Description: This 177-nucleotide RNA was probed chemically with 2A3 and DMS. The 2A3 profile rests on 1,815 reads. The data come from the RNA Mapping Database (RMDB), library RFMREP. DMS adducts were read by reverse transcription with MarathonRT. The RNA was probed in 150 mM KOAc, 10 mM MgCl2 and 150 mM bicine (pH 8.5) at 24 C.

[RMDB]
RNA sequence: GGGAACGACUCGAGUAGAGUCGAAAACGGGCAACACGCGGGCUACAAUGGCUCUGACAGUGGGAUGCAACGCCGAGAGGCGACGCUAAUCUCCAAACGGAGUCGUAGUUCGGAUUGCGGGCUGAAAGCUAUUGAUUGUCUUCGGACAAUCAAUAGCAAAAGAAACAACAACAACAAC
Reactivity to 2A3 in 0.01 (KOAc 150mM, MgCl2 10mM, bicine 150mM(pH8.5), 24C), signal-to-noise 2, nucleotides 027 to 126: c010g040g090g080c030a010a010c030a020c230g300c000g120g000g000c000u000a010c000a090a240u300g010g010c000u000c070u020g060a030c030a040g040u290g060g000g000a010u000g010c000a010a020c000g000c000c000g060a050g010a020g000g020c010g010a020c080g000c010u020a050a030u000c040u000c030c000a030a000a070c040g000g000a000g000u000c010g000u010a000g000u030u010c010g010g030a030u010u070g000c050g010g100g040c020u110g070a100a050a020
Reactivity to DMS in 0.01 (KOAc 150mM, MgCl2 10mM, bicine 150mM(pH8.5), 24C), signal-to-noise 2, nucleotides 027 to 126: c100g000g020g010c020a070a060c080a140c020g030c010g030g000g000c000u000a010c010a150a120u000g010g000c000u000c000u000g030a050c190a090g000u040g000g000g000a010u000g010c000a060a300c000g020c000c000g010a300g000a210g020g010c010g000a010c300g000c040u000a090a060u000c000u000c020c010a040a120a070c060g000g010a010g000u000c000g010u000a000g010u000u000c000g020g000a180u000u000g000c040g020g000g010c050u020g010a030a050a150